[RMDB]
RNA sequence: GGGAACGACUCGAGUAGAGUCGAAAAUAACUUGGAAUAACAGUACCUCAUAAUUCAUUUUAUGAUGGUUUUGGUGAAUAAGCGGAUCAACCACGGGUGAAAUCUGUGCAAAUUGGGCAACUGAUUUGUAUAGCAAAGUAGUCCCUCUGGUCCCGUAUCUUCUCUCUAUCUUCGGAUAGAGAGAAGAAAAAGAAACAACAACAACAAC
Reactivity to DMS in 0.01 (KOAc 150mM, MgCl2 10mM, bicine 150mM(pH8.5), 24C), signal-to-noise 2, nucleotides 027 to 156: u000a040a050c010u010u000g010g000a240a090u010a050a050c020a070g000u000a040c000c020u000c000a030u000a010a030u000u020c270a150u000u000u000u000a010u000g000a040u000g050g010u010u000u010u020g000g010u010g010a130a110u000a080a100g000c050g000g000a080u000c040a050a030c000c000a040c120g000g010g020u000g000a180a200a140u000c000u000g040u000g010c010a000a010a030u010u000g010g000g000c300a050a170c020u000g010a010u000u000u000g010u000a020u000a040g020c160a030a040a140g010u000a190g020u000c000c020c070u000c020u010g010g020u000c070c000c010g030u030a040
Reactivity to 2A3 in 0.01 (KOAc 150mM, MgCl2 10mM, bicine 150mM(pH8.5), 24C), signal-to-noise 3, nucleotides 027 to 156: u110a010a030c030u050u110g070g080a110a060u120a150a050c020a040g050u030a010c010c010u000c010a000u020a040a020u120u140c080a080u160u050u000u020a010u030g020a060u150g020g020u060u070u130u090g040g000u130g040a110a080u130a240a000g040c010g010g010a020u060c040a010a020c000c030a010c080g010g000g000u010g010a000a010a010u000c010u000g020u000g010c000a000a000a000u010u010g010g020g000c010a080a070c060u010g000a000u000u000u000g010u010a010u010a000g030c130a000a000a000g000u000a000g000u010c000c020c000u010c000u000g030g000u000c010c010c000g020u060a060
Source: RMDB library PDB130, as collected in RNAgym.
An RNA of 207 nucleotides, treated with DMS and 2A3 and read out base by base.
The DMS profile rests on 2,858 reads.
For 2A3 the reverse transcriptase was SuperScript II with manganese.